Conditions: 150 mM KOAc, 10 mM MgCl2 and 150 mM bicine (pH 8.5), 24 C. An RNA of 177 nucleotides, treated with DMS and read out base by base.
RNA sequence: GGGAACGACUCGAGUAGAGUCGAAAAGAUAUGGACUCGCAUAGGGAGCUCUAGGUCGGAAACGACCUAUGAGCGAAGAACUAUGGCGAGUCCUAAGUCAAAACGUCAGUUCUUCGGAACUGACGAACCACUUUAAACGGUUCGCCGUUUAAAGUGGAAAAGAAACAACAACAACAAC
Reactivity to DMS in 0.01 (KOAc 150mM, MgCl2 10mM, bicine 150mM(pH8.5), 24C), signal-to-noise 2, nucleotides 027 to 126: g000a010u000a130u010g000g010a010c000u000c000g000c020a040u000a010g020g020g010a150g020c000u000c000u010a000g010g040u000c000g020g000a020a020a080c000g010a030c000c010u000a010u010g010a000g020c000g010a050a090g000a130a130c000u000a000u000g010g020c010g010a020g010u000c010c010u000a000a090g000u000c010a150a080a100a200c040g020u000c000a010g010u000u000c000u000u030c250g040g000a030a000c000u000g000a000c010g000a060a130